RNA sequence: GGGAACGACUCGAGUAGAGUCGAAAAAGAGGCGAUACGUCGCCUCAAGCUUGGUGCUUAGCUUCUUUCACCAAGCAUAUUACACGUGGAUAACCGCCAAAGGAGAAACACUGACUACGGUCAGUGAGGAAGUUGGUUCGGUUCGCCGAACCAACAACAUCGGAACAUCGUUCGCGAUGUUCCGAUGAAAAGAAACAACAACAACAAC
Reactivity to 2A3 in 0.01 (KOAc 150mM, MgCl2 10mM, bicine 150mM(pH8.5), 24C), signal-to-noise 3, nucleotides 027 to 156: a000g000a000g000g000c010g020a010u000a020c240g070u000c000g000c000c000u000c000a000a010g000c000u000u000g000g000u020g000c060u070u020a070g030c020u020u060c000u010u090u030c010a000c000c000a000a000g010c000a000u040a010u090u120a060c120a000c050g030u070g000g030a030u070a160a110c030c010g060c040c040a040a020a020g050g000a000g000a020a090a000c000a000c010u000g000a000c000u020a050c180g050g000u000c000a000g000u010g000a000g030g050a130a070g010u010u010g000g030u010u000c000g010g050u020u030c170g040c050c000g000a000a000c000c000a010a000c000a000a000
Reactivity to DMS in 0.01 (KOAc 150mM, MgCl2 10mM, bicine 150mM(pH8.5), 24C), signal-to-noise 1, nucleotides 027 to 156: a100g000a010g000g020c000g000a040u010a050c280g020u000c010g030c000c010u000c000a040a060g000c040u000u000g010g000u000g010c100u010u000a030g040c140u000u000c000u000u000u000c010a070c000c010a040a030g000c010a100u000a030u000u000a110c110a150c170g000u010g030g040a200u010a090a200c010c070g040c070c090a010a110a140g000g020a070g000a120a100a150c040a020c060u000g040a020c000u000a090c250g060g020u010c000a000g010u010g010a070g020g020a110a160g040u000u000g040g000u000u000c000g020g000u010u010c250g010c010c010g010a040a010c000c010a000a000c000a060a100
This 207-nucleotide RNA was probed chemically with 2A3 and DMS.
The DMS profile rests on 2,403 reads.
The RNA was probed in 150 mM KOAc, 10 mM MgCl2 and 150 mM bicine (pH 8.5) at 24 C.
DMS adducts were read by reverse transcription with MarathonRT.